[RMDB]
RNA sequence: GGGAACGACUCGAGUAGAGUCGAAAAGGAUCCUAUCUCUUGGUAACUGGCUGUACAUCAGUUACCAGUGAGCAGGUAUACACUAUGUGUCAAUGAUGUACAGGUUGACAUAUAGAGAAUAGGAUCGCUACUGCAUACUAUUCGUAGUAUGCAGUAGAAAAGAAACAACAACAACAAC
Reactivity to 2A3 in 0.01 (KOAc 150mM, MgCl2 10mM, bicine 150mM(pH8.5), 24C), signal-to-noise 8, nucleotides 027 to 126: g020g000a000u000c000c000u010a000u010c010u010c000u010u020g010g000u010a010a010c000u010g050g000c020u070g080u160a020c010a040u020c000a000g000u010u010a000c000c000a000g010u050g010a020g020c040a040g030g100u190a080u040a060c070a000c010u030a020u050g020u010g000u000c010a020a040u060g060a060u090g010u050a050c020a050g090g100u010u010g010a000c000a000u030a000u010a010g020a000g020a030a030u010a010g000g000a000u000c000g000
Reactivity to DMS in 0.01 (KOAc 150mM, MgCl2 10mM, bicine 150mM(pH8.5), 24C), signal-to-noise 9, nucleotides 027 to 126: g010g000a010u000c000c000u000a020u000c010u000c000u000u000g000g010u000a020a020c010u000g000g010c090u010g020u000a060c040a070u000c000a010g010u000u000a010c000c000a020g010u010g010a040g020c210a100g010g010u010a100u010a080c130a140c000u000a030u000g010u000g000u000c040a040a060u000g000a110u000g000u000a050c120a050g010g010u000u000g000a020c010a020u000a010u000a000g000a240g000a090a040u000a010g010g010a010u000c000g000
The record gives the reactivity of an RNA of 177 nucleotides to 2A3 and DMS. Values cover nucleotides 27 to 126. The DMS profile rests on 45,859 reads. The reactions ran in a buffer of 150 mM KOAc, 10 mM MgCl2 and 150 mM bicine (pH 8.5), at 24 C. The 2A3 profile rests on 33,566 reads. It was measured as part of the RMDB library OK2TRN.